This 177-nucleotide RNA was probed chemically with 2A3 and DMS. Source: RMDB library TTRDEL, as collected in RNAgym. The 2A3 profile rests on 1,595 reads. For DMS, 769 sequencing reads were counted.
RNA sequence: GGGAACGACUCGAGUAGAGUCGAAAAGAUAUGGAAGUUGCAAGUGAGACAUUCGUUUGACGUCGGAAACGACCGAGAAUGUCCUGAAUCUUGGACUUCCUAAGUCAAACCAGCGUUCGCGCUGGAAGUAACGGGAGUGGUUCGCCACUCCCGUUACAAAAGAAACAACAACAACAAC
Reactivity to 2A3 in 0.01 (KOAc 150mM, MgCl2 10mM, bicine 150mM(pH8.5), 24C), signal-to-noise 2, nucleotides 027 to 126: g020a010u030a030u110g010g010a030a060g000u010u270g300c000a000a000g010u030g030a260g020a060c010a000u020u030c050g110u070u230u300g170a130c090g000u010c000g010g040a070a080a040c020g020a000c000c020g040a040g000a180a000u000g010u000c040c010u110g120a160a120u090c010u010u010g000g020a010c000u010u000c010c000u020a040a020g010u000c010a000a060a140c000c000a000g060c020g040u130u210c300g020c000g000c160u010g020g020a020a050
Reactivity to DMS in 0.01 (KOAc 150mM, MgCl2 10mM, bicine 150mM(pH8.5), 24C), signal-to-noise 1, nucleotides 027 to 126: g040a030u010a210u000g000g000a010a000g020u000u000g020c010a040a020g000u000g000a160g000a000c010a000u010u010c000g010u000u010u000g010a090c300g010u010c000g000g000a100a070a100c010g010a010c000c030g000a160g000a030a000u000g000u000c010c110u000g000a080a100u010c000u000u010g020g000a010c000u000u010c000c000u000a000a000g020u000c000a060a150a170c000c000a000g030c020g000u000u010c280g050c000g010c020u000g000g000a010a060